Record summary:
Structure probing data (DMS and 2A3) for a 207-nucleotide construct. Reactivities are rounded to 0.1 and cut off at 0 and 3. For DMS, 3,468 sequencing reads were counted. Values cover nucleotides 27 to 156.

RNA sequence: GGGAACGACUCGAGUAGAGUCGAAAACGCUAGCUCGCAGUCACUUAGUACAGCGAACAACAACUAGAAUAAUCAUGUAAUAGAGACAUUACAAUUGAUGAUUAAUAAAGAUCUUCACUACACACAGAUAGCAACACGUAAGUAAGAAUAGAUGGAACCGGGCACCCGCAUUCGUGUGGGUGCUCGGAAAAGAAACAACAACAACAAC
Reactivity to DMS in 0.01 (KOAc 150mM, MgCl2 10mM, bicine 150mM(pH8.5), 24C), signal-to-noise 2, nucleotides 027 to 156: c060g010c030u000a040g020c040u000c020g030c040a170g010u000c040a140c120u000u000a200g050u000a070c080a040g050c030g040a080a030c050a050a120c050a080a060c050u000a060g000a100a140u000a100a070u000c070a070u000g000u010a040a080u000a100g020a220g050a080c100a190u000u000a040c080a050a210u000u010g020a060u020g020a140u000u000a040a080u000a050a140a110g010a110u010c020u010u000c040a060c040u000a050c060a070c010a080c080a070g000a120u000a080g010c050a040a030c070a050c020g000u000a030a110g030u000a030a070g010a030a130u000a090g020a130u000g010g000a110a190
Reactivity to 2A3 in 0.01 (KOAc 150mM, MgCl2 10mM, bicine 150mM(pH8.5), 24C), signal-to-noise 6, nucleotides 027 to 156: c030g010c050u030a010g010c010u020c030g040c020a030g030u050c020a030c120u070u120a030g020u110a050c030a040g040c010g060a030a020c030a030a000c000a020a050c030u080a020g050a100a100u120a050a020u050c020a030u030g020u030a010a030u050a070g120a010g030a060c020a050u020u020a000c020a060a090u080u090g020a020u010g010a010u040u110a080a170u110a100a120a000g050a040u010c030u070u030c050a020c080u110a010c040a010c000a000c020a070g050a130u100a030g040c030a010a050c030a010c120g030u060a030a060g010u030a010a040g030a070a060u140a060g050a110u140g020g170a020a020